[RMDB]
RNA sequence: GGGAACGACUCGAGUAGAGUCGAAAAGCGCGCAUGACACGCUCGGAACCGGGAUCGACCGAAUCGCUCUCAAUGGCCUUUACCAGUGUUUCCACGUCGCGUGUGCCAAGGUUCAGCCCUUGCGCGAAGGCUAUUAGCGUUUCGACGCUAAUAGCCUAAAAGAAACAACAACAACAAC
Reactivity to DMS in 0.01 (KOAc 150mM, MgCl2 10mM, bicine 150mM(pH8.5), 24C), signal-to-noise 3, nucleotides 027 to 126: g030c040g010c010g030c050a110u010g010a140c020a050c050g020c020u000c110g020g000a050a050c010c050g000g010g010a080u000c060g020a050c040c020g010a040a100u000c130g000c060u000c050u010c070a100a130u000g010g010c020c010u000u010u000a120c010c000a100g010u010g010u000u000u000c000c050a160c180g010u010c160g020c040g000u000g010u010g020c100c080a070a020g000g010u000u000c140a190g020c090c020c040u000u000g010c040g010c000g010a080
Reactivity to 2A3 in 0.01 (KOAc 150mM, MgCl2 10mM, bicine 150mM(pH8.5), 24C), signal-to-noise 1, nucleotides 027 to 126: g050c000g010c070g000c000a040u070g070a100c020a010c080g030c040u060c070g010g030a030a030c000c000g050g000g000a060u030c010g050a040c030c010g040a160a110u120c010g040c030u000c000u020c000a020a150u080g040g000c060c000u050u050u080a060c010c050a020g020u000g020u070u060u070c030c030a070c050g100u080c100g040c010g010u050g040u040g050c070c060a070a010g070g010u220u300c030a100g030c000c000c000u000u020g000c030g010c010g000a030